Chemical mapping of a 207-nucleotide RNA with DMS and 2A3. 2A3 adducts were read by reverse transcription with SuperScript II with manganese. DMS adducts were read by reverse transcription with MarathonRT. Source: RMDB library RSTRND, as collected in RNAgym. Conditions: 150 mM KOAc, 10 mM MgCl2 and 150 mM bicine (pH 8.5), 24 C.
RNA sequence: GGGAACGACUCGAGUAGAGUCGAAAAUCGCAGACGAUUAUAACUACGCAGUAGCAGCUUAAUAACUGUCAUACUGCCGUCUCUCCAGUCCUCCGCUCAUGAGGGUUGGGUCCGAGGCGUCGACCAAAAUGAGCUAGCAAUCGGGUGGUGUUCUGGUUAAUAAGCAUCUGUUCGCAGAUGCUUAUUAAAAAGAAACAACAACAACAAC
Reactivity to DMS in 0.01 (KOAc 150mM, MgCl2 10mM, bicine 150mM(pH8.5), 24C), signal-to-noise 2, nucleotides 027 to 156: u000c060g040c090a180g010a170c010g010a110u050u000a140u000a050a140c040u020a100c060g000c000a030g010u000a130g020c000a010g000c000u010u000a130a140u010a180a120c010u010g000u010c030a190u010a040c000u000g000c000c020g000u010c000u000c000u020c010c000a050g010u000c000c000u010c000c070g000c110u010c050a160u000g000a060g030g030g000u000u000g010g000g010u000c090c080g020a080g040g020c030g000u000c050g050a180c030c070a040a090a170a100u000g000a090g000c010u010a140g000c050a080a060u010c040g000g010g030u010g000g000u000g020u000u010c020u000g020g040u000
Reactivity to 2A3 in 0.01 (KOAc 150mM, MgCl2 10mM, bicine 150mM(pH8.5), 24C), signal-to-noise 3, nucleotides 027 to 156: u120c030g020c110a030g070a130c030g000a050u100u130a090u190a300a050c130u160a040c030g010c000a000g010u010a000g020c000a000g000c030u110u120a100a050u130a080a100c010u020g020u040c040a070u020a030c000u000g000c010c000g010u010c000u000c000u030c000c000a000g020u030c000c010u000c000c070g030c030u030c020a040u100g000a000g010g010g000u020u000g020g000g020u170c180c070g000a020g010g000c000g020u030c040g020a060c010c070a010a040a040a110u020g000a000g010c030u060a030g080c060a090a120u150c070g070g010g030u060g040g040u090g030u020u030c010u000g010g050u010